[RMDB]
Description
Chemical mapping of a 177-nucleotide RNA with DMS and 2A3. Reactivities are given for positions 27 through 126. DMS adducts were read by reverse transcription with MarathonRT. Conditions: 150 mM KOAc, 10 mM MgCl2 and 150 mM bicine (pH 8.5), 24 C.
RNA sequence: GGGAACGACUCGAGUAGAGUCGAAAAUAAUCCUGGACGGACCACCGGUGGCGAAAGCGCCUCAGGAAGACGGAUCCGACGGUGAGGGACGAAAGCUCGGGUCACGAACCGGAUUAGAUACCCGGGUUAAUAUGGCAGAGUUCGCUCUGCCAUAUUAAAAAGAAACAACAACAACAAC
Reactivity to DMS in 0.01 (KOAc 150mM, MgCl2 10mM, bicine 150mM(pH8.5), 24C), signal-to-noise 5, nucleotides 027 to 126: u030a110a110u010c010c000u010g010g000a150c010g000g010a050c010c030a180c000c030g010g000u010g020g000c000g030a170a120a210g030c040g020c000c010u010c010a050g000g000a090a090g020a120c220g000g030a150u000c010c000g020a040c010g000g000u010g000a060g000g020g000a020c040g000a100a220a170g010c000u000c000g010g000g000u000c000a110c080g000a130a150c010c000g000g000a050u010u010a070g000a090u030a120c130c000c000g000g000g030u030
Reactivity to 2A3 in 0.01 (KOAc 150mM, MgCl2 10mM, bicine 150mM(pH8.5), 24C), signal-to-noise 5, nucleotides 027 to 126: u120a010a030u020c000c000u020g000g060a050c000g010g010a000c000c010a020c020c000g030g020u030g000g000c010g080a240a150a070g300c060g020c030c000u010c010a010g040g020a040a070g160a050c140g000g070a240u000c010c000g020a010c010g020g030u210g050a060g020g120g000a010c020g060a160a010a000g010c000u000c000g020g010g000u020c010a010c020g000a020a030c010c010g000g000a060u110u100a080g060a080u130a060c000c000c000g000g000g000u000